This 177-nucleotide RNA was probed chemically with DMS and 2A3. For DMS the reverse transcriptase was MarathonRT.

RNA sequence: GGGAACGACUCGAGUAGAGUCGAAAAACAUGCGGGUCCAAAGAACGCGAAUCCUUGUAAAGUGGCAAGUUUACGGUAUCAAUCUUCACUUCCACCGUAUAAUACGUGUACUUUGACGAUUGCGAACCGUAAUGCGAUCGUUCGCGAUCGCAUUACGAAAAGAAACAACAACAACAAC
Reactivity to DMS in 0.01 (KOAc 150mM, MgCl2 10mM, bicine 150mM(pH8.5), 24C), signal-to-noise 2, nucleotides 027 to 126: a120c070a050u000g010c000g000g000g000u030c070c100a070a050a040g000a080a030c020g020c040g030a090a030u020c150c090u040u000g000u010a040a150a120g060u000g000g000c100a000a000g000u020u060u010a000c110g040g000u000a090u040c200a070a050u000c040u030u000c140a020c010u000u020c010c000a020c050c240g000u070a090u000a050a050u060a040c050g000u000g000u010a030c040u030u000u010g000a070c030g000a020u010u030g020c030g000a030a010c040
Reactivity to 2A3 in 0.01 (KOAc 150mM, MgCl2 10mM, bicine 150mM(pH8.5), 24C), signal-to-noise 4, nucleotides 027 to 126: a000c100a050u210g000c030g020g060g010u060c050c000a010a050a000g040a070a000c000g010c010g020a060a170u120c030c000u050u060g040u090a030a100a040g050u040g060g000c060a030a010g000u040u040u060a070c060g000g020u060a060u210c060a130a220u130c050u170u090c080a070c040u070u020c050c030a010c010c000g020u080a060u050a120a100u130a060c070g000u030g010u040a080c010u080u020u060g040a040c060g100a120u000u200g020c030g030a050a050c040